This 207-nucleotide RNA was probed chemically with 2A3 and DMS. 2A3 adducts were read by reverse transcription with SuperScript II with manganese. High DMS reactivity at an A or C suggests that its Watson-Crick edge is free. The data come from the RNA Mapping Database (RMDB), library OK3TST.
[RMDB]
RNA sequence: GGGAACGACUCGAGUAGAGUCGAAAAAAUCUGCUUCGACGCGUUCAUGGGAAACCUGUCGAUGCGCAGCCACACGUGAAUGCCCCGAUUGCCGCUGUGCAUGACGCGAGCAAUGUUUUCGCCGAAAAAGUUCCUAAACGUUUCGGCCGCAAUACAAUGAUAACGAAACAUUCGUGUUUCGUUAUCAAAAAGAAACAACAACAACAAC
Reactivity to 2A3 in 0.01 (KOAc 150mM, MgCl2 10mM, bicine 150mM(pH8.5), 24C), signal-to-noise 4, nucleotides 027 to 156: a000a000u040c030u060g000c010u060u070c030g050a040c030g050c050g010u020u050c040a130u150g050g010g000a100a040a090c000c040u060g020u030c030g090a050u030g000c030g020c020a020g040c030c020a060c020a010c070g010u090g140a140a110u230g100c030c030c000c020g080a090u020u130g050c060c020g020c030u060g030u080g050c010a030u070g030a020c030g010c010g030a050g000c000a030a030u020g050u030u050u050u110c060g000c010c000g040a000a020a000a030a030g020u040u010c040c000u070a160a090a030c020g000u000u010u000c010g000g020c060c030g050c030a040a040u180a100c050a030a100
Reactivity to DMS in 0.01 (KOAc 150mM, MgCl2 10mM, bicine 150mM(pH8.5), 24C), signal-to-noise 3, nucleotides 027 to 156: a050a010u000c040u000g000c030u000u010c000g040a070c060g020c040g010u010u000c040a120u000g010g060g000a110a090a150c030c020u000g010u000c050g010a070u000g040c040g020c010a060g010c020c050a100c040a050c010g030u010g020a080a080u000g010c010c010c020c020g010a230u000u000g020c010c100g010c020u010g010u020g000c050a050u010g020a160c070g010c020g020a070g040c020a110a040u020g000u000u000u000u000c060g000c010c000g010a040a030a030a070a100g010u000u000c100c070u010a070a070a060c050g000u000u000u000c000g010g020c000c050g020c100a070a090u010a060c080a130a240